[RMDB]
RNA sequence: GGGAACGACUCGAGUAGAGUCGAAAAGAGGCUCGGCGUAACGCGGCUCUUGCCACCAGGUUGCCUCCGCUAGUCGAGCGGACUUGGUCUCUUCCGCCCGAAGCCCUUUUUCUUUCUAAUCAGCUUGUUCCAACGCGCCCCGCGAGUACAAUCCCCGCCUCGUAUUAUCCUUCGGGAUAAUACGAGGAAAAGAAACAACAACAACAAC
Reactivity to 2A3 in 0.01 (KOAc 150mM, MgCl2 10mM, bicine 150mM(pH8.5), 24C), signal-to-noise 2, nucleotides 027 to 156: g100a110g000g010c000u000c030g020g000c060g050u060a080a030c090g010c040g050g030c040u070c090u160u250g020c030c020a020c000c020a010g060g010u110u190g200c020c020u060c040c020g010c050u140a090g150u300c080g080a000g000c020g000g000a010c020u020u050g000g030u010c020u000c000u180u000c040c010g040c040c020c000g020a110a010g000c000c010c000u000u060u020u030u020c020u040u180u010c020u060a060a090u040c010a010g080c080u020u100g060u120u030c040c020a070a040c060g020c000g010c060c000c000c010g020c030g000a040g000u060a080c040a050a040u020c020c020c000c000g020

Record summary: The record gives the reactivity of an RNA of 207 nucleotides to 2A3. The data come from the RNA Mapping Database (RMDB), library VIROID. 2A3 adducts were read by reverse transcription with SuperScript II with manganese. The reactions ran in a buffer of 150 mM KOAc, 10 mM MgCl2 and 150 mM bicine (pH 8.5), at 24 C. Reactivities are given for positions 27 through 156.